[RMDB]
RNA sequence: GGGAACGACUCGAGUAGAGUCGAAAAUAUGUGUGCCUCAUUUCAGAAGUACUUUGAACUCAGAGGUGAAGGUGUACGGCUAACAAUCCCUCUGGAACGUUGGUUAAGCCAGCUGGACACUCCCACUGCUCGUGGGGCUCUGCCAUGGCUCAGGGGCUGAUAUUGGCAUAUUCGUAUGCCAAUAUCAAAAAGAAACAACAACAACAAC
Reactivity to 2A3 in 0.01 (KOAc 150mM, MgCl2 10mM, bicine 150mM(pH8.5), 24C), signal-to-noise 3, nucleotides 027 to 156: u300a090u110g050u010g010u040g020c010c000u000c020a030u000u040u040c060a070g020a190a020g160u060a130c090u150u250u220g070a080a030c030u030c070a010g010a000g050g000u080g040a070a040g020g020u050g020u030a040c030g030g040c050u050a060a050c010a050a080u040c010c000c000u050c030u050g050g040a060a010c060g050u040u060g040g000u050u080a030a020g010c010c000a020g010c030u070g010g040a020c020a020c070u070c010c010c000a010c020u100g060c040u080c110g010u010g000g010g000g000c020u020c000u040g000c010c040a050u030g010g000c020u010c040a030g000g000g030g000c030
Reactivity to DMS in 0.01 (KOAc 150mM, MgCl2 10mM, bicine 150mM(pH8.5), 24C), signal-to-noise 4, nucleotides 027 to 156: u010a030u010g030u010g020u000g020c010c010u020c010a120u010u000u000c070a170g010a190a090g020u000a060c110u000u000u020g000a120a080c030u000c040a280g010a050g020g030u000g000a060a110g030g040u000g000u000a050c060g020g000c050u000a060a090c040a070a230u000c030c000c010u000c110u000g030g020a060a110c100g020u010u010g020g030u000u000a070a150g030c020c010a050g030c040u010g030g020a060c050a040c050u000c010c000c010a060c030u000g020c160u010c190g000u010g010g020g010g010c070u000c040u000g050c030c000a130u000g010g000c020u000c030a090g000g010g020g030c120

An RNA of 207 nucleotides, treated with 2A3 and DMS and read out base by base. For 2A3, 2,869 sequencing reads were counted. Values cover nucleotides 27 to 156. For DMS, 7,945 sequencing reads were counted. DMS adducts were read by reverse transcription with MarathonRT. The data come from the RNA Mapping Database (RMDB), library OK3TST.